[RMDB]
RNA sequence: GGGAACGACUCGAGUAGAGUCGAAAAGAUAUGGACAGGAAGUCAUCGCAGCUCCGAUGAAACUCAUUCGGAAACGAAUGAGUGGAGGAGCUGAACUACGAUGUCACCUGUCCUAAGUCAAAAUGACUCUAAAGAUCUUCGGAUCUUUAGAGUCAAACAUUGGAAUUGUGUUCGCACAAUUCCAAUGAAAAGAAACAACAACAACAAC
Reactivity to DMS in 0.01 (KOAc 150mM, MgCl2 10mM, bicine 150mM(pH8.5), 24C), signal-to-noise 2, nucleotides 027 to 156: g000a060u000a040u000g050g000a010c010a040g000g020a120a140g050u000c000a030u000c030g000c030a070g020c000u000c030c030g000a150u020g000a230a160a020c000u000c000a000u010u000c000g010g020a080a030a100c000g000a060a010u000g000a000g020u010g000g000a110g060g000a010g000c020u030g010a040a050c050u000a300c070g020a040u000g020u000c030a300c000c000u000g000u000c010c000u010a000a060g000u000c020a060a090a040a150u000g010a010c010u000c000u000a000a010a030g000a020u000c000u000u040c300g050g020a000u000c000u000u000u010a000g000a010g030u020c020a000a050a130
Reactivity to 2A3 in 0.01 (KOAc 150mM, MgCl2 10mM, bicine 150mM(pH8.5), 24C), signal-to-noise 3, nucleotides 027 to 156: g000a000u000a000u020g010g000a000c000a010g000g080a210a190g090u050c000a000u000c010g000c020a000g000c000u000c010c010g290a300u010g000a000a000a000c000u000c000a000u000u000c000g010g000a010a000a000c000g000a000a010u000g000a010g010u000g020g000a010g000g000a000g010c000u000g000a000a000c000u080a040c010g000a000u000g010u030c010a030c010c000u010g000u000c000c000u000a000a000g000u000c010a000a000a020a180u080g000a000c000u010c000u000a000a010a000g000a010u000c000u040u120c300g050g010a000u000c000u000u030u000a000g000a000g000u000c000a000a000a000